[RMDB]
RNA sequence: GGGAACGACUCGAGUAGAGUCGAAAAACGCUUCAUAAUGUGCGGCAAAGAAACAUUGUUUAUGCAAAGGCACUUCGCAAUGUGUGCUCAAACAUUGCUUAUUCAAACACGCUUCACAAUGUGCGACAAAACUUCACGGUCUUCGGACCGUGAAGAACUAUCGGGAACAGUUCGCUGUUCCCGAUAGAAAAGAAACAACAACAACAAC
Reactivity to 2A3 in 0.01 (KOAc 150mM, MgCl2 10mM, bicine 150mM(pH8.5), 24C), signal-to-noise 7, nucleotides 027 to 156: a000c020g010c050u140u110c040a040u090a230a100u120g010u030g030c020g020g000c030a070a070a070g110a050a140a020c060a070u050u060g030u060u100u080a080u120g050c060a040a090a070g100g000c010a010c030u090u080c090g040c130a080a140u120g010u000g010u000g040c040u090c180a080a100a020c030a030u020u020g010c010u040u080a120u100u080c060a010a060a040c060a010c150g010c010u030u030c010a010c010a040a040u040g020u030g030c000g040a030c060a010a100a050a030c000u000u000c010a000c000g000g000u000c010u030u070c130g070g000a000c000c000g000u000g000a000a000g000a000a000
Reactivity to DMS in 0.01 (KOAc 150mM, MgCl2 10mM, bicine 150mM(pH8.5), 24C), signal-to-noise 2, nucleotides 027 to 156: a060c010g030c030u010u000c040a090u000a080a070u000g060u000g040c070g020g000c030a110a100a060g040a120a080a050c010a040u020u000g030u000u010u010a070u000g000c040a090a110a150g010g020c000a040c010u000u000c110g040c120a110a110u000g010u000g070u000g000c020u000c020a070a150a020c020a040u000u000g000c030u010u000a050u000u000c060a160a080a040c020a080c060g050c060u000u000c150a080c080a060a080u000g000u000g000c020g020a180c100a030a060a050a070c000u000u000c000a020c020g000g000u000c010u000u000c300g090g010a000c000c000g060u000g000a000a000g010a060a120

An RNA of 207 nucleotides, treated with 2A3 and DMS and read out base by base. For 2A3, 5,570 sequencing reads were counted. Reactivities are given for positions 27 through 156. It was measured as part of the RMDB library M2RFPK. The reactions ran in a buffer of 150 mM KOAc, 10 mM MgCl2 and 150 mM bicine (pH 8.5), at 24 C.